[RMDB]
RNA sequence: GGGAACGACUCGAGUAGAGUCGAAAAGAAGCAAAUUUUAUUAUUAAGCUUAUUAAAUAAGAAGUGAGUGAGUGACUGGUAUGAGGACUAAGGGACCAAGGGAGCAAUGGAACAUAACAAACUUGGUAUGUGACAGAGGUGGCAUUGCUGAAAACCACUAAUUACGACUAUUCGUAGUCGUAAUUAGAAAAGAAACAACAACAACAAC
Reactivity to DMS in 0.01 (KOAc 150mM, MgCl2 10mM, bicine 150mM(pH8.5), 24C), signal-to-noise 2, nucleotides 027 to 156: g000a060a080g010c000a110a030a150u010u000u000u020a100u040u000a150u010u020a120a090g000c010u010u000a090u000u010a050a050a120u000a100a160g000a030a090g000u000g010a060g010u000g010a070g040u020g030a040c050u000g010g060u000a040u010g020a060g000g010a130c050u010a060a180g020g010g020a040c070c020a020a120g020g020g010a160g000c080a050a080u010g010g010a110a060c050a080u000a060a060c030a040a140a070c100u000u000g000g010u000a040u010g000u000g020a090c040a060g000a080g020g010u010g020g010c040a070u000u000g020c010u000g000a060a020a020a120c030c040a120
Reactivity to 2A3 in 0.01 (KOAc 150mM, MgCl2 10mM, bicine 150mM(pH8.5), 24C), signal-to-noise 3, nucleotides 027 to 156: g060a030a000g010c020a070a050a070u080u220u110u130a280u250u140a100u120u110a090a000g000c000u040u030a040u140u120a250a040a090u160a080a030g030a020a030g010u030g020a020g010u030g030a000g010u020g040a060c030u030g010g000u050a030u080g010a050g010g000a000c030u060a040a070g040g020g000a010c020c010a020a010g030g000g000a030g010c020a040a020u040g020g010a060a040c030a040u080a060a010c040a090a050a030c030u020u010g000g000u070a070u030g050u020g030a020c030a040g060a010g060g020u030g020g000c010a010u000u060g020c020u030g020a030a040a000a020c010c010a050